RNA sequence: GGGAACGACUCGAGUAGAGUCGAAAAGAUAUGGAUUUGAGAGCGCUACUCUCGUAUUCCGAAGAACUCUUUCGGAAACGAAAGAGGGAGGAAUACGAGAGUAGACCCGCUACUCAAAUCCUAAGUCCUCCCAUAUAUCGUUCGCGAUAUAUGGGAGAAAAGAAACAACAACAACAAC
Reactivity to DMS in 0.01 (KOAc 150mM, MgCl2 10mM, bicine 150mM(pH8.5), 24C), signal-to-noise 2, nucleotides 027 to 126: g010a130u000a300u000g000g000a020u000u020u000g010a010g020a100g000c030g020c000u000a020c000u000c000u000c000g020u010a000u000u010c000c000g000a150a220g010a120a300c010u000c000u000u000u000c010g000g000a130a160a150c000g010a010a020a000g030a000g000g040g000a050g000g000a030a010u000a000c000g030a010g000a010g010u030a000g000a090c220c290c110g020c000u000a090c000u000c000a010a030a020u010c000c010u010a030a110g010u010c060
Reactivity to 2A3 in 0.01 (KOAc 150mM, MgCl2 10mM, bicine 150mM(pH8.5), 24C), signal-to-noise 1, nucleotides 027 to 126: g080a010u170a080u280g000g000a010u010u010u000g020a020g000a000g030c010g020c050u010a000c000u000c000u000c000g000u000a030u000u000c010c010g170a250a030g000a030a040c000u000c000u010u000u000c010g000g000a180a100a050c010g010a000a000a010g000a000g000g000g000a040g010g000a010a000u000a000c020g000a030g010a000g000u000a000g000a000c000c000c020g030c040u270a290c010u010c000a030a010a000u000c000c000u020a060a020g050u000c020